[RMDB]
RNA sequence: GGGAACGACUCGAGUAGAGUCGAAAAAAUAAACUGGAUCUCCCCGUUAGCAUCCUUCUCAACCCGCUGCCCACAAAAGGUUUGGAUGUAAAAUCCGCCCGGCUUGCCCUGCGCCUCAAGAAUGGCGUUCGCGCGGCGCGUCAUCUCCAGAGCAUAGCCUGUUACGUAUGUUCGCAUACGUAACAGGAAAAGAAACAACAACAACAAC
Reactivity to 2A3 in 0.01 (KOAc 150mM, MgCl2 10mM, bicine 150mM(pH8.5), 24C), signal-to-noise 1, nucleotides 027 to 156: a000a000u260a020a010a040c100u050g000g060a080u010c040u050c020c000c000c000g010u010u020a020g010c030a060u010c000c000u020u040c030u000c040a080a110c010c000c010g040c010u040g010c010c010c000a080c040a050a090a020a020g050g000u120u070u100g040g000a020u030g000u150a050a160a000a050u000c010c000g020c020c000c030g080g040c010u050u060g020c000c000c000u030g000c000g030c030c000u060c040a040a110g140a100a060u080g010g000c000g010u030u080c030g010c000g020c000g020g050c030g020c000g010u030c010a070u070c030u010c010c040a040g000a010g060c090a040u070a080g070